[RMDB]
RNA sequence: GGGAACGACUCGAGUAGAGUCGAAAAGAUGUGCUUUGUUAAACAGAUGCUUGAAGGCAGCAUGCUCCUUAAGAGUCAUCACCACUCCCUAAUCUCAAGUACCCAGGGACACAAAAACUGCGGAAGGCAGACAAUUGCAGUUCGCUGCAAUUGUCUGAAAAGAAACAACAACAACAAC
Reactivity to 2A3 in 0.01 (KOAc 150mM, MgCl2 10mM, bicine 150mM(pH8.5), 24C), signal-to-noise 6, nucleotides 027 to 126: g040a080u080g030u060g050c050u070u100u110g140u110u160a070a060a010c040a020g040a050u040g020c020u030u070g100a100a060g070g000c010a000g000c020a050u080g060c010u030c040c020u030u050a080a000g020a010g090u050c000a020u010c010a010c050c030a050c030u040c020c000c000u050a120a150u060c070u040c080a030a050g020u040a060c000c000c020a020g000g010g040a030c010a010c010a070a110a030a080a010c020u030g010c030g060g020a030a020g110g000
Reactivity to DMS in 0.01 (KOAc 150mM, MgCl2 10mM, bicine 150mM(pH8.5), 24C), signal-to-noise 3, nucleotides 027 to 126: g000a080u000g000u030g000c090u020u030u010g020u010u020a070a050a210c150a070g000a070u020g000c010u010u000g020a090a090g000g020c070a060g000c050a030u000g000c030u000c050c030u010u000a050a070g020a060g010u000c040a010u010c020a120c040c020a070c080u000c030c000c010u000a070a140u020c020u010c070a040a050g000u020a020c030c040c010a040g000g000g030a150c060a070c060a080a010a050a080a060c070u000g000c010g000g030a130a040g030g050